[RMDB]
RNA sequence: GGGAACGACUCGAGUAGAGUCGAAAAGAUAUGGAUGUGGUGAGCUCGAUAAGCGAUGUGUCGGAAACGACAUUUCGCUUUUGACGAGCUACCACAUCCUAAGUCAAAACGGAAGUUCGCUUCCGAAUCUUGUUCCAUACUUCGGUAUGGAACAAGAAAAAGAAACAACAACAACAAC
Reactivity to 2A3 in 0.01 (KOAc 150mM, MgCl2 10mM, bicine 150mM(pH8.5), 24C), signal-to-noise 2, nucleotides 027 to 126: g020a010u080a030u190g000g000a010u040g030u020g040g070u220g300a020g030c020u010c070g120a140u050a300a000g000c000g000a010u010g020u000g020u020c010g000g040a070a060a030c020g030a010c000a000u000u000u020c000g000c060u030u000u010u000g010a010c000g000a000g020c000u010a020c000c000a010c000a000u010c000c000u000a000a000g010u020c000a080a150a000a090c020g020g050a020a020g010u140u300c300g130c270u000u000c000c000g040a030a070
Reactivity to DMS in 0.01 (KOAc 150mM, MgCl2 10mM, bicine 150mM(pH8.5), 24C), signal-to-noise 2, nucleotides 027 to 126: g010a020u010a300u000g010g000a000u000g020u000g000g010u000g030a030g000c000u000c000g010a140u000a010a010g010c010g010a010u000g000u000g010u000c000g020g000a060a050a170c000g050a010c000a010u000u000u000c000g020c010u010u010u010u000g020a190c130g000a010g000c000u010a030c000c000a010c000a000u000c000c000u000a000a040g000u020c020a140a050a120a220c050g000g000a040a010g020u000u020c300g020c010u010u000c000c000g000a060a100
Structure probing data (2A3 and DMS) for a 177-nucleotide construct. For DMS the reverse transcriptase was MarathonRT. The RNA was probed in 150 mM KOAc, 10 mM MgCl2 and 150 mM bicine (pH 8.5) at 24 C. Source: RMDB library TTRDES, as collected in RNAgym. For DMS, 2,775 sequencing reads were counted.